[RMDB]
RNA sequence: GGGAACGACUCGAGUAGAGUCGAAAACACCUUGAGGACCGCAUCGUUGUCCAGGCUGAGAGGCAUGUUCCACGUGCCAGGUGCGAUAUCACUCUCCUUCAGACCGACAAUAGCCUUAAGGGGAGGGAGCUGAAACAUCAGACGAGAACGCCCAGGACUUUAUGCAUGUUUUCGAACAUGCAUAAAGAAAAGAAACAACAACAACAAC
Reactivity to 2A3 in 0.01 (KOAc 150mM, MgCl2 10mM, bicine 150mM(pH8.5), 24C), signal-to-noise 3, nucleotides 027 to 156: c070a040c010c010u020u100g100a110g010g020a060c050c010g020c070a080u110c080g110u070u090g000u020c040c020a050g030g000c020u040g030a050g020a030g120g000c050a020u100g050u100u100c060c040a090c040g010u020g060c010c060a040g020g000u030g010c020g060a020u030a030u250c040a030c070u020c000u010c010c000u020u010c030a070g000a100c000c040g060a040c150a140a140u120a180g030c000c000u030u030a020a000g000g000g020g000a010g000g010g030a030g050c030u030g030a080a130a030c040a080u080c020a010g050a040c040g060a050g030a120a010c020g020c010c010c010a040g020g050a040
Reactivity to DMS in 0.01 (KOAc 150mM, MgCl2 10mM, bicine 150mM(pH8.5), 24C), signal-to-noise 2, nucleotides 027 to 156: c050a140c050c030u020u010g000a180g040g010a050c030c020g060c090a150u010c030g000u000u000g040u010c010c020a100g040g040c030u000g000a150g010a080g020g040c040a060u010g010u000u000c070c040a160c090g020u000g020c010c020a040g030g050u000g030c020g010a160u000a110u010c000a080c020u000c000u000c010c000u010u010c120a050g010a050c010c040g000a160c170a120a180u000a060g000c000c020u010u010a050a040g010g000g020g000a100g010g030g000a020g050c150u010g010a120a060a040c020a110u000c020a080g010a160c040g010a150g000a070a080c020g000c000c040c020a140g000g010a250